[RMDB]
RNA sequence: GGGAACGACUCGAGUAGAGUCGAAAAAUGCGAUCGAUUGCGUGGACCAAGAAGCUACUACCAACAUCGCCACGGUGAUUAGUCAGUUGACCGCGAUGAUCGGGCAGCUAGUAGCAACCUUGGCGGGGUCAACUGCGUAAUUCGUUACGCAGUUGACAAAAGAAACAACAACAACAAC
Reactivity to 2A3 in 0.01 (KOAc 150mM, MgCl2 10mM, bicine 150mM(pH8.5), 24C), signal-to-noise 6, nucleotides 027 to 126: a010u100g000c020g020a050u050c060g100a100u060u150g030c040g020u080g080g020a140c000c000a010a010g030a060a000g020c020u020a010c000u030a050c010c020a040a040c010a040u020c000g000c030c040a080c050g020g020u030g030a070u040u140a080g150u120c070a020g120u080u080g110a090c020c000g010c030g050a080u090g030a070u070c040g000g010g010c020a050g020c000u010a000g010u000a000g000c020a020a030c000c010u000u010g000g000c030g000g040g030
Reactivity to DMS in 0.01 (KOAc 150mM, MgCl2 10mM, bicine 150mM(pH8.5), 24C), signal-to-noise 7, nucleotides 027 to 126: a050u000g010c030g000a080u010c100g000a090u000u010g020c040g020u000g010g020a160c030c020a050a050g010a170a300g020c010u000a030c030u000a060c060c020a150a180c080a050u010c020g010c020c120a050c090g000g000u000g000a080u000u010a090g020u000c140a080g010u000u000g000a040c050c050g000c050g000a050u010g000a080u000c100g000g000g010c130a060g000c300u000a030g010u000a020g010c100a070a080c200c000u000u010g010g020c040g000g010g010